[RMDB]
RNA sequence: GGGAACGACUCGAGUAGAGUCGAAAAUUCGUCAGGGAACUGAUGAAAAGAUUGCUUUCCAACAGUGGACAGCUGCCGGUGAAGAUUUUUCACUUUAUUUCUUUACAGGUGUACCGAUUAUGUAUCAGUACACUGAGCCAUAAGUGAAGUAUGACGGUGUCGAAUACUGAUUCGUCAGUAUUCGACAAAAAGAAACAACAACAACAAC
Reactivity to DMS in 0.01 (KOAc 150mM, MgCl2 10mM, bicine 150mM(pH8.5), 24C), signal-to-noise 1, nucleotides 027 to 156: u000u000c010g030u000c000a000g030g000g060a210a300c020u010g000a000u010g000a020a040a050a220g010a180u000u000g000c020u000u000u000c020c000a130a060c050a080g040u000g000g010a170c150a230g000c020u000g010c000c020g030g100u000g000a040a100g000a240u000u000u000u000u000c010a010c010u010u000u000a020u030u000u010c020u000u000u000a110c080a150g010g020u000g000u000a000c000c010g020a010u000u020a160u010g010u000a090u000c000a010g010u000a010c000a000c000u000g000a060g060c010c000a070u000a000a070g020u000g010a060a110g010u010a010u000g010a000c060g000g010
Reactivity to 2A3 in 0.01 (KOAc 150mM, MgCl2 10mM, bicine 150mM(pH8.5), 24C), signal-to-noise 2, nucleotides 027 to 156: u040u020c000g000u000c000a000g010g060g090a210a230c000u000g000a000u000g030a050a010a000a020g090a120u150u170g000c010u020u050u030c010c000a050a030c070a200g090u080g060g030a000c020a050g010c050u060g000c050c020g080g000u030g050a060a090g010a160u120u030u040u010u030c000a010c000u010u090u080a060u030u210u050c070u040u120u040a110c080a030g000g040u000g000u000a000c000c010g000a010u030u030a130u300g110u040a010u020c000a000g000u000a000c000a010c020u010g000a000g030c020c000a030u030a130a000g000u010g020a020a010g070u080a090u140g070a060c030g050g020